Record summary: Conditions: 150 mM KOAc, 10 mM MgCl2 and 150 mM bicine (pH 8.5), 24 C. Structure probing data (DMS and 2A3) for a 177-nucleotide construct. DMS adducts were read by reverse transcription with MarathonRT. The DMS profile rests on 6,489 reads.
RNA sequence: GGGAACGACUCGAGUAGAGUCGAAAAUGAUUGUGGGGUACUCUGUGGUGGGCCUGCCAGUGUUCGGACCUGGAAGCGAGCAGUACCUGAAAGAGGGGGCGGAUGGAGACGGGGAAGUGGACGCUGCCUUACUAGUGGAAUUCGUUCCACUAGUAAGAAAAGAAACAACAACAACAAC
Reactivity to DMS in 0.01 (KOAc 150mM, MgCl2 10mM, bicine 150mM(pH8.5), 24C), signal-to-noise 5, nucleotides 027 to 126: u010g020a130u000u000g020u010g000g000g010g020u010a070c060u010c090u000g010u020g020g030u000g010g010g010c140c030u000g010c050c030a080g010u000g020u000u000c110g000g000a140c110c040u000g000g010a120a110g010c070g010a130g020c040a030g010u000a050c040c010u010g020a070a100a080g010a110g000g010g010g010g010c110g000g000a080u010g010g000a130g010a110c130g000g000g000g000a060a070g000u010g010g010a070c100g010c070u000g000c120
Reactivity to 2A3 in 0.01 (KOAc 150mM, MgCl2 10mM, bicine 150mM(pH8.5), 24C), signal-to-noise 3, nucleotides 027 to 126: u180g030a090u180u050g020u100g070g030g010g020u040a030c010u010c040u100g040u030g040g050u050g020g040g000c000c010u020g030c000c010a080g000u060g060u180u130c070g080g110a110c010c010u030g070g030a040a000g020c010g020a010g020c040a010g020u040a060c000c020u040g070a100a070a010g070a050g000g010g010g010g050c060g010g010a060u100g010g020a100g010a080c040g040g000g000g000a090a010g030u060g070g010a010c020g010c050u050g030c000